[RMDB]
RNA sequence: GGGAACGACUCGAGUAGAGUCGAAAAGAAGUGGUAGAAAAGCAUAUUGCAGGCCAUGCGAUAAGCCGUCUCACAAUUUGUGUGGUUAUUACUAUGCUUAUUGCUGUUGCCGUAAAUGUGCGGUGCGCGAUCAUACACUAUUCGUAGUGUAUGAUCGAAAAGAAACAACAACAACAAC
Reactivity to DMS in 0.01 (KOAc 150mM, MgCl2 10mM, bicine 150mM(pH8.5), 24C), signal-to-noise 9, nucleotides 027 to 126: g010a090a080g010u010g010g020u010a070g010a080a070a100a160g010c010a010u000a020u000u000g010c170a300g000g010c020c060a030u010g010c000g010a010u000a010a020g010c010c300g000u010c080u000c010a030c020a080a130u020u030u030g020u010g020u010g000g010u010u020a070u020u030a050c160u020a060u010g010c010u000u000a020u000u000g010c010u000g010u020u020g020c010c010g010u020a170a030a020u000g010u000g010c010g000g020u010g010c130g010
Reactivity to 2A3 in 0.01 (KOAc 150mM, MgCl2 10mM, bicine 150mM(pH8.5), 24C), signal-to-noise 9, nucleotides 027 to 126: g110a060a020g040u120g070g080u200a070g090a070a130a020a010g000c010a010u020a010u030u080g050c200a050g000g000c010c020a030u090g000c000g010a000u000a010a000g010c020c030g100u020c020u040c020a050c010a160a250u100u260u140g090u030g010u030g030g090u120u070a100u150u070a120c100u100a080u300g000c000u000u000a000u010u010g010c030u060g090u220u140g000c000c010g000u050a010a020a010u020g000u010g000c020g000g020u080g020c090g000
Conditions: 150 mM KOAc, 10 mM MgCl2 and 150 mM bicine (pH 8.5), 24 C. An RNA of 177 nucleotides, treated with DMS and 2A3 and read out base by base. It was measured as part of the RMDB libraries RFM100 and RFMREP.